[RMDB]
RNA sequence: GGGAACGACUCGAGUAGAGUCGAAAAGUUAUGCAUUUUGGUACAUUGGAUAAAAGUGAUCUUGUCAAGGGUUAUAAUAUCGCAUGUACAUGCGGUAGUAAACUUGUGCAUUGCACCCAAUUUAAUGGUCGUAUCUGGGAUUCGUCCCAGAUACGACAAAAGAAACAACAACAACAAC
Reactivity to 2A3 in 0.01 (KOAc 150mM, MgCl2 10mM, bicine 150mM(pH8.5), 24C), signal-to-noise 2, nucleotides 027 to 126: g010u050u030a010u050g020c010a020u000u020u130u220g030g020u060a050c030a080u070u050g100g040a060u040a110a140a030a000g060u030g040a030u020c010u060u090g080u040c070a030a020g110g000g000u050u040a100u010a210a050u020a010u040c020g000c010a000u000g050u160a070c030a100u010g030c000g070g000u040a020g020u040a020a120a000c020u050u050g000u000g000c000a000u000u040g000c000a030c020c000c010a000a000u130u120u180a140a230u090g140
Reactivity to DMS in 0.01 (KOAc 150mM, MgCl2 10mM, bicine 150mM(pH8.5), 24C), signal-to-noise 2, nucleotides 027 to 126: g000u000u000a000u000g010c020a030u000u000u010u020g010g020u010a040c030a030u000u010g020g000a070u000a040a050a130a160g010u000g000a040u000c050u010u000g010u020c180a080a050g010g050g030u000u000a060u010a040a140u000a010u000c000g010c000a000u000g010u010a040c170a070u000g000c020g010g000u000a020g000u000a040a160a080c040u000u000g010u010g000c010a040u010u000g000c060a120c010c000c040a060a110u020u000u010a080a120u020g030
Chemical mapping of a 177-nucleotide RNA with 2A3 and DMS. Values cover nucleotides 27 to 126. DMS adducts were read by reverse transcription with MarathonRT. It was measured as part of the RMDB library OK2TST. The reactions ran in a buffer of 150 mM KOAc, 10 mM MgCl2 and 150 mM bicine (pH 8.5), at 24 C. For 2A3, 1,388 sequencing reads were counted.